Chemical mapping of a 177-nucleotide RNA with DMS and 2A3. The reactions ran in a buffer of 150 mM KOAc, 10 mM MgCl2 and 150 mM bicine (pH 8.5), at 24 C. The DMS profile rests on 1,638 reads. High DMS reactivity at an A or C suggests that its Watson-Crick edge is free.
[RMDB]
RNA sequence: GGGAACGACUCGAGUAGAGUCGAAAAGUCGCAACGAGUUCGCGACGGGACUCGAAGGCUAGGAGCUUCGCAUUCUAGCGAGCGAAGAAAGGAUAUCGAAUAGUGUUCAACGGUAUCCGGAACACAAGGCAUGCUUCUCGUUCGCGGGAAGCAUGCCAAAAGAAACAACAACAACAAC
Reactivity to DMS in 0.01 (KOAc 150mM, MgCl2 10mM, bicine 150mM(pH8.5), 24C), signal-to-noise 2, nucleotides 027 to 126: g000u000c000g070c030a160a130c090g000a030g020u000u000c060g030c190g060a160c130g000g030g000a000c000u000c080g040a230a070g010g030c000u000a000g000g030a000g000c100u020u000c080g000c040a120u000u000c020u000a000g000c000g000a210g000c000g000a000a000g000a000a190a190g000g000a000u000a020u000c040g000a040a070u040a090g000u020g040u000u020c040a120a100c000g010g080u010a010u070c000c000g010g000a040a060c120a070c300a130a160
Reactivity to 2A3 in 0.01 (KOAc 150mM, MgCl2 10mM, bicine 150mM(pH8.5), 24C), signal-to-noise 2, nucleotides 027 to 126: g080u010c020g000c050a020a060c020g000a000g010u000u020c010g000c040g300a100c110g050g000g000a000c000u000c000g000a190a020g130g000c000u030a020g000g000a000g040c020u140u130c050g050c060a280u020u000c040u020a000g050c050g020a000g000c060g000a030a050g080a230a120a000g000g000a020u010a000u000c010g050a120a050u140a230g110u200g040u250u130c070a100a000c000g000g000u010a010u000c000c000g060g020a190a030c120a000c000a070a020